[RMDB]
RNA sequence: GGGAACGACUCGAGUAGAGUCGAAAACGACUCAAUACGUCCCCGUCGUACAGAAUGGUAACAUAUCUCUCCAAAUAUCUGAGCUUGGGUAUACGGGGAAACCCAACCCCUUGGGAAGUUUGGGUAUAAAAGGAGCGAUCCUUCGGGAUCGCUCCAAGAAUAAGCGAAGCUUCGGCUUCGCUUAUUCAAAAGAAACAACAACAACAAC
Reactivity to 2A3 in 0.01 (KOAc 150mM, MgCl2 10mM, bicine 150mM(pH8.5), 24C), signal-to-noise 1, nucleotides 027 to 156: c030g020a020c010u050c030a000a130u010a170c010g030u040c010c000c030c010g070u080c010g010u070a040c020a050g030a110a080u080g010g050u110a130a030c020a070u180a210u100c020u030c000u050c060c070a070a260a100u110a140u000c060u040g020a020g120c110u100u080g080g000g010u020a110u010a090c040g010g000g000g000a000a000a040c000c000c000a000a030c000c000c020c000u000u160g030g020g020a070a060g000u000u010u000g050g000g110u100a040u150a130a070a030a050g000g000a000g000c040g000a000u020c020c020u010u080c190g060g000g000a000u000c000g000c000u080c000c000a000a000
Notes:
Chemical mapping of a 207-nucleotide RNA with 2A3. The RNA was probed in 150 mM KOAc, 10 mM MgCl2 and 150 mM bicine (pH 8.5) at 24 C. 2A3 adducts were read by reverse transcription with SuperScript II with manganese.